[RMDB]
RNA sequence: GGGAACGACUCGAGUAGAGUCGAAAAUCCAGUACGUUCGCGUACUGGAAAAGUCGCGGCUUGAGGGCGUGUACGGCAGCGCACACACACGACCGUCAAGCCAAAGUCCGUACUUCGGUACGGACAACCCAUAAGGAUUGUUCGCAAUCCUUAUGGGAAAAGAAACAACAACAACAAC
Reactivity to 2A3 in 0.01 (KOAc 150mM, MgCl2 10mM, bicine 150mM(pH8.5), 24C), signal-to-noise 6, nucleotides 027 to 126: u010c000c000a000g010u000a000c010g010u010u050c220g010c000g120u000a000c010u000g000g020a010a010a000a010g080u070c050g000c080g130g000c010u000u010g000a010g040g030g020c010g000u000g020u020a030c050g050g010c060a120g110c080g030c130a040c010a000c000a000c000a010c170g160a190c020c000g170u020c000a000a000g000c000c010a010a000a000g000u000c000c000g000u000a000c000u020u050c250g080g000u000a000c000g000g000a000c000a000a020
Reactivity to DMS in 0.01 (KOAc 150mM, MgCl2 10mM, bicine 150mM(pH8.5), 24C), signal-to-noise 6, nucleotides 027 to 126: u000c000c000a020g010u000a010c010g010u000u010c190g040c010g030u000a000c000u000g010g000a000a020a050a120g010u000c100g030c210g010g000c000u000u000g000a040g000g010g010c010g010u000g010u000a100c120g010g010c070a130g020c180g010c040a100c050a130c120a030c020a020c010g000a100c000c010g010u000c000a010a010g000c010c010a010a020a070g010u000c000c000g000u000a000c000u010u010c150g020g000u000a010c000g000g010a000c010a030a060